[RMDB]
RNA sequence: GGGAACGACUCGAGUAGAGUCGAAAACAGCAGACAAGAGAGGGAAGUGAAAGCAGAAACCCCUCAUAAAAUCAUCAGAUCUCAUGAGACUUAUUCACCACCACAAGAACAGUAUGGGGGAACCGCCCCCAUGAUUCAAUUAUCUCUGACUGGGUCACCAUACCGAUGCUUUCGAGCAUCGGUAUGGAAAAGAAACAACAACAACAAC
Reactivity to 2A3 in 0.01 (KOAc 150mM, MgCl2 10mM, bicine 150mM(pH8.5), 24C), signal-to-noise 1, nucleotides 027 to 156: c040a010g190c000a040g060a060c050a030a090g110a010g000a030g070g020g010a030a020g010u030g110a130a070a090g070c080a100g250a070a020a020c030c070c030c030u050c070a040u140a010a050a010a010u120c060a010u080c070a030g000a020u070c070u010c070a070u090g050a010g000a060c030u020u010a000u070u070c050a060c120c000a050c000c010a070c050a080a060g060a120a030c020a010g060u050a070u080g000g030g000g030g000a000a030c050c030g110c080c000c000c000c000a000u010g000a000u020u030c010a000a040u060u060a070u110c030u000c020u040g050a090c020u020g030g020g000u070c050a040
Structure probing data (2A3) for a 207-nucleotide construct. The reactions ran in a buffer of 150 mM KOAc, 10 mM MgCl2 and 150 mM bicine (pH 8.5), at 24 C.